[RMDB]
RNA sequence: GGGAACGACUCGAGUAGAGUCGAAAACAACUGCUGCUGCCAUACCGAAACCGCCGACGAAGCCGACGAGCAGCAUGAUGCCAAACCGGUCCUGAGUAUUGAACAGCGGGGCGAAAAGAAUCACGCCCAGUGCUCAUUCGUUCGCGAAUGAGCACUGAAAAGAAACAACAACAACAAC
Reactivity to DMS in 0.01 (KOAc 150mM, MgCl2 10mM, bicine 150mM(pH8.5), 24C), signal-to-noise 1, nucleotides 027 to 126: c050a080a170c080u000g020c080u000g000c080u000g020c110c020a110u050a080c110c020g030a030a070a100c100c010g020c030c050g010a090c130g010a090a130g030c040c030g020a110c020g000a080g010c050a050g010c090a020u000g000a100u000g050c110c050a070a070a050c180c020g000g000u010c020c010u000g000a100g010u010a100u020u010g000a090a130c060a120g010c030g030g000g000g000c040g000a020a090a180a080g040a120a050u000c080a110c030g010c020c060